[RMDB]
RNA sequence: GGGAACGACUCGAGUAGAGUCGAAAAGCACAUAGGUAGAUCUUAAUAAGUUAGCAACCUUGCUAUAUCAACCUUGAAUUUGGCAAAUUCCUGUUUAAUGUUCUUGCCAAACAUAUGCUGUCUAAACAUCAAUCAGGCUCGCAGUAAUAUUAGUGAAGCGUAAAAUUUACUUCGGUAAAUUUUACGCAAAAGAAACAACAACAACAAC
Reactivity to 2A3 in 0.01 (KOAc 150mM, MgCl2 10mM, bicine 150mM(pH8.5), 24C), signal-to-noise 3, nucleotides 027 to 156: g050c020a030c010a120u100a020g020g050u020a030g040a080u020c030u100u060a150a070u130a230a200g070u050u090a010g030c010a060a110c040c040u080u050g000c000u030a020u020a010u130c020a040a050c000c010u060u060g070a130a040u040u020u080g020g000c020a040a040a060u070u000c040c000u110g070u190u110u090a110a050u080g020u050u020c040u030u020g000c000c000a040a000a000c020a010u070a050u070g030c030u020g020u080c010u070a100a180a060c030a040u130c050a090a130u040c010a000g040g050c040u050c070g020c010a000g020u100a060a120u130a070u260u120a030g070u120g140a150a020
Reactivity to DMS in 0.01 (KOAc 150mM, MgCl2 10mM, bicine 150mM(pH8.5), 24C), signal-to-noise 1, nucleotides 027 to 156: g020c000a060c030a210u000a060g040g030u000a210g020a070u000c030u000u000a100a100u000a060a160g020u010u000a150g030c010a160a100c130c000u000u000g000c030u020a080u000a090u010c050a060a070c040c030u000u010g010a100a140u000u000u000g000g030c010a050a010a120u000u000c000c010u000g000u000u000u010a100a130u000g000u000u020c090u020u000g030c040c060a050a070a050c060a160u000a050u000g000c030u000g000u000c010u010a030a070a050c060a190u000c070a060a070u030c060a060g040g030c030u010c060g010c040a010g010u020a030a080u000a080u000u000a150g040u000g000a180a190

The record gives the reactivity of an RNA of 207 nucleotides to 2A3 and DMS. For 2A3, 1,234 sequencing reads were counted. DMS adducts were read by reverse transcription with MarathonRT. For 2A3 the reverse transcriptase was SuperScript II with manganese.